[RMDB]
RNA sequence: GGGAACGACUCGAGUAGAGUCGAAAAAAGUGACUGUUCCAGCGGGAAGCUAAAUUCCGGUUUUACAAUCUCAGGGGCCGCGCCCGGUACCAUCAGUGAAUAUUUGCCAUUAUGUUCAUGGUAAUUCCACUGAAAAUCAGUUCGCUGAUUUUCAGUGAAAAGAAACAACAACAACAAC
Reactivity to 2A3 in 0.01 (KOAc 150mM, MgCl2 10mM, bicine 150mM(pH8.5), 24C), signal-to-noise 2, nucleotides 027 to 126: a000a000g070u030g060a040c050u030g000u060u020c050c010a030g030c020g000g020g000a100a010g020c080u110a150a030a070u080u020c020c000g010g030u040u010u040u120a060c060a050a120u000c070u020c120a080g030g000g000g010c070c010g060c030g030c020c030c020g010g020u020a060c020c010a040u080c040a040g050u030g110a080a020u060a070u110u040u080g080c020c000a050u060u030a100u240g120u070u100c040a010u050g000g000u030a040a000u110u030c030
Reactivity to DMS in 0.01 (KOAc 150mM, MgCl2 10mM, bicine 150mM(pH8.5), 24C), signal-to-noise 4, nucleotides 027 to 126: a050a050g000u000g010a100c060u010g010u000u000c060c080a110g020c030g010g010g000a050a080g010c090u010a060a050a140u010u000c010c010g020g010u000u000u000u000a070c100a090a050u000c050u010c070a100g010g000g000g010c050c050g020c160g000c020c000c020g000g010u000a050c040c040a070u010c090a100g010u000g000a060a030u000a080u000u010u010g000c060c040a040u000u010a080u010g010u000u000c080a050u000g020g020u010a070a120u000u000c060